[RMDB]
RNA sequence: GGGAACGACUCGAGUAGAGUCGAAAAGGGGUCGCAACGUUGAUCGAGGUUUGUCAGAUAUCAGCUGAAGCCUCCACGGCUGAAUAUCUUGGAUUUAACCUCGGGAGUUGCGACGGAGGCACCCAAAACAGAUUGGAGUUUCGACUCCAAUCUGUAACCACCUCUCAUCGUUCGCGAUGAGAGGUGGAAAAGAAACAACAACAACAAC
Reactivity to 2A3 in 0.01 (KOAc 150mM, MgCl2 10mM, bicine 150mM(pH8.5), 24C), signal-to-noise 1, nucleotides 027 to 156: g090g000g090g000u010c000g000c000a020a020c010g170u230u030g000a040u010c000g000a000g010g040u070u050u170g130u220c030a010g000a020u000a000u030c000a000g020c000u050g010a120a000g030c000c000u030c000c000a020c020g010g000c000u000g040a190a030u000a000u000c000u070u250g250g060a120u170u090u060a050a040c000c010u000c020g020g000g000a020g020u000u000g000c020g000a000c000g000g010a000g000g000c000a090c000c000c000a090a070a020a000c020a000g000a020u000u020g000g020a010g030u070u140u250c240g220a070c000u000c000c000a000a000u010c000u000g000u000a000a000